RNA sequence: GGGAACGACUCGAGUAGAGUCGAAAAUCGAGGUUGGCGGUGGGCUCGUCGGCCAGGACGAGGAUGGGAUUCUUCACCAGGGCCCUGGCGAUGGCCACGCGCUGUUGCUGACCACCCGAGAGCUGGGAACUACCUAAUAGUUCGCUAUUAGGUAGUUAAAAGAAACAACAACAACAAC
Reactivity to 2A3 in 0.01 (KOAc 150mM, MgCl2 10mM, bicine 150mM(pH8.5), 24C), signal-to-noise 6, nucleotides 027 to 126: u090c020g020a080g020g030u050u100g030g000c040g030g090u120g070g080g030c050u040c080g020u020c070g040g080c010c000a010g020g020a020c040g020a040g090g030a080u070g050g010g080a090u210u060c040u130u080c060a080c060c020a020g080g100g010c000c030c000u020g080g000c010g010a030u020g000g010c000c010a020c020g050c010g000c010u030g050u090u090g000c010u010g020a100c000c020a050c010c010c000g060a100g000a010g070c110u130g000g020g040
Reactivity to DMS in 0.01 (KOAc 150mM, MgCl2 10mM, bicine 150mM(pH8.5), 24C), signal-to-noise 9, nucleotides 027 to 126: u010c090g010a140g010g010u000u000g030g040c020g010g020u000g010g010g010c020u000c020g020u000c040g020g020c010c010a020g000g000a080c030g000a160g010g010a090u010g010g010g000a230u010u000c080u010u000c050a070c060c040a090g010g010g010c040c010c020u000g000g010c010g000a110u000g010g010c000c010a040c050g010c070g020c030u000g010u000u000g010c020u000g000a110c040c030a140c030c020c010g000a110g010a090g010c080u000g000g000g010
This 177-nucleotide RNA was probed chemically with 2A3 and DMS.
For 2A3 the reverse transcriptase was SuperScript II with manganese.
The data come from the RNA Mapping Database (RMDB), library OK2TST.
Values cover nucleotides 27 to 126.
The DMS profile rests on 58,150 reads.